Conditions: 150 mM KOAc, 10 mM MgCl2 and 150 mM bicine (pH 8.5), 24 C. Structure probing data (2A3 and DMS) for a 207-nucleotide construct. The 2A3 profile rests on 5,752 reads. For 2A3 the reverse transcriptase was SuperScript II with manganese. Values cover nucleotides 27 to 156.
[RMDB]
RNA sequence: GGGAACGACUCGAGUAGAGUCGAAAAGGCGUCUAAGGUUAGGUCAUAAAAAGUCAGAUCGCGUCGUUGCUUAGAUUCGGAACAGCGGCGUUAAAUGAAUCGAGUUAGUGAUUGAUGUUAGCCUCGUGUUGUGGCGGAAUCAAUCAUGAAACUUAAACCUUUGUUUAUCGUUCGCGAUAAACAAAGGAAAAGAAACAACAACAACAAC
Reactivity to 2A3 in 0.01 (KOAc 150mM, MgCl2 10mM, bicine 150mM(pH8.5), 24C), signal-to-noise 6, nucleotides 027 to 156: g030g010c030g010u030c080u080a010a070g020g020u070u090a010g000g020u040c040a050u210a050a110a030a020a000g080u060c030a000g020a070u070c020g000c000g000u000c000g010u010u010g010c040u050u040a100g020a290u250u150c110g040g050a070a010c000a010g000c000g000g000c000g000u020u040a010a040a030u080g060a020a030u110c090g000a010g010u000u040a020g010u000g010a000u000u010g000a010u020g050u160u160a020g010c020c000u030c060g100u110g040u130u130g000u010g000g000c000g000g010a020a010u000c000a000a000u000c000a000u000g010a040a050a000c020u020u050a060a040a050
Reactivity to DMS in 0.01 (KOAc 150mM, MgCl2 10mM, bicine 150mM(pH8.5), 24C), signal-to-noise 2, nucleotides 027 to 156: g010g000c010g020u000c040u000a060a080g010g040u000u000a070g020g030u010c040a090u000a060a060a090a090a080g020u010c000a090g010a080u000c090g030c050g030u000c030g010u000u010g000c010u000u000a080g000a190u010u000c050g000g010a050a030c040a040g000c030g020g000c040g010u000u000a010a040a110u000g020a060a050u000c030g000a060g020u000u000a300g010u000g010a000u000u010g020a050u000g000u000u000a090g000c020c000u010c080g000u010g030u000u000g020u000g010g010c000g030g000a280a040u000c000a000a030u000c020a000u000g010a120a060a060c110u000u000a050a070a190